[RMDB]
RNA sequence: GGGAACGACUCGAGUAGAGUCGAAAAUUGCCAGCCACAUUCACAUUGCCAUUCAUUCAUUCAUUGCCAGCAGUUUUAGGCAGCAAGCAUUCAUUGCUUCAAGAGUUUUAGCAUUGCAGGCUUAGAGUUGCUUAGAGAGGCGCUUAGCAAGCAUUAGGGUGUAUAACACCUUCGGGUGUUAUACACCAAAAGAAACAACAACAACAAC
Reactivity to 2A3 in 0.01 (KOAc 150mM, MgCl2 10mM, bicine 150mM(pH8.5), 24C), signal-to-noise 3, nucleotides 027 to 156: u130u080g040c000c000a000g020c040c000a070c010a060u130u120c050a030c020a070u010u110g000c040c010a060u060u040c030a020u050u040c010a030u080u070c030a160u070u160g050c010c000a000g000c020a020g050u010u020u020u180a040g040g010c010a000g020c010a030a010g020c000a010u050u100c010a020u110u160g020c010u050u050c030a100a030g060a060g140u030u020u150u180a010g010c040a060u010u080g030c040a020g040g000c000u010u030a010g010a010g060u070u090g010c010u040u050a030g000a000g000a010g110g030c030g000c050u010u010a020g020c020a070a000g040c040a010u080u150a080g140
Reactivity to DMS in 0.01 (KOAc 150mM, MgCl2 10mM, bicine 150mM(pH8.5), 24C), signal-to-noise 2, nucleotides 027 to 156: u000u020g000c030c030a120g000c030c060a060c040a140u000u000c070a090c060a110u000u000g020c010c000a100u000u000c040a190u010u000c050a120u000u010c070a070u010u000g010c010c030a140g020c010a170g020u000u000u000u000a060g050g000c000a120g050c020a040a060g050c020a090u020u000c080a050u010u000g010c060u020u000c090a080a190g000a180g010u000u000u000u000a070g040c030a080u010u000g000c130a090g010g000c000u010u010a130g000a160g030u000u000g000c000u000u000a070g010a110g030a140g000g020c000g020c040u010u000a070g020c030a090a190g030c010a120u000u010a100g010
Source: RMDB library OK3TST, as collected in RNAgym. Structure probing data (2A3 and DMS) for a 207-nucleotide construct.